[RMDB]
RNA sequence: GGGAACGACUCGAGUAGAGUCGAAAAAUGGCGAAUGCAUGGGGAACUACAUCUGUGUCGCGAGUUCGAUUCUCGCCAGGGCCUGGUCCUGUAGCUCAGUUGGUAGAGCAAGCUGUUCCCCGAACACAAAAUCCAGCUAGGUUCGCCUAGCUGGAAAGUCUAUAUUUGCGUUCGCGCAAAUAUAGACAAAAGAAACAACAACAACAAC
Reactivity to DMS in 0.01 (KOAc 150mM, MgCl2 10mM, bicine 150mM(pH8.5), 24C), signal-to-noise 3, nucleotides 027 to 156: a050u010g000g000c050g030a160a050u010g010c060a090u000g000g020g000g020a010a060c020u020a040c070a100u000c000u010g030u000g020u000c030g030c010g010a020g000u010u000c030g000a300u000u000c000u010c000g010c030c000a060g000g030g010c000c070u050g060g000u010c010c030u000g000u000a060g020c000u000c010a130g010u000u010g020g020u000a070g010a020g040c010a170a110g020c020u000g010u000u010c030c000c010c040g000a050a040c060a050c060a030a060a070a080u000c010c000a000g010c020u000a020g010g020u010u010c230g030c010c000u000a010g020c020u000g010g000a010a010a080
Reactivity to 2A3 in 0.01 (KOAc 150mM, MgCl2 10mM, bicine 150mM(pH8.5), 24C), signal-to-noise 4, nucleotides 027 to 156: a000u080g070g000c030g090a140a030u110g040c100a110u180g000g000g000g010a030a020c040u110a060c090a120u100c040u050g080u050g050u180c010g000c020g010a010g000u010u000c010g010a000u010u000c000u000c000g000c000c000a000g010g000g000c020c230u170g080g030u030c000c010u010g010u020a000g000c000u000c000a040g030u190u150g120g150u160a010g000a000g000c010a000a000g020c030u020g000u020u000c020c000c000c000g000a000a000c010a010c030a030a190a000a010u010c000c000a000g000c000u000a010g000g030u020u010c030g040c040c000u000a000g000c000u000g000g000a010a000a000
Chemical mapping of a 207-nucleotide RNA with DMS and 2A3. The reactions ran in a buffer of 150 mM KOAc, 10 mM MgCl2 and 150 mM bicine (pH 8.5), at 24 C. It was measured as part of the RMDB library M2RFPK. For 2A3 the reverse transcriptase was SuperScript II with manganese.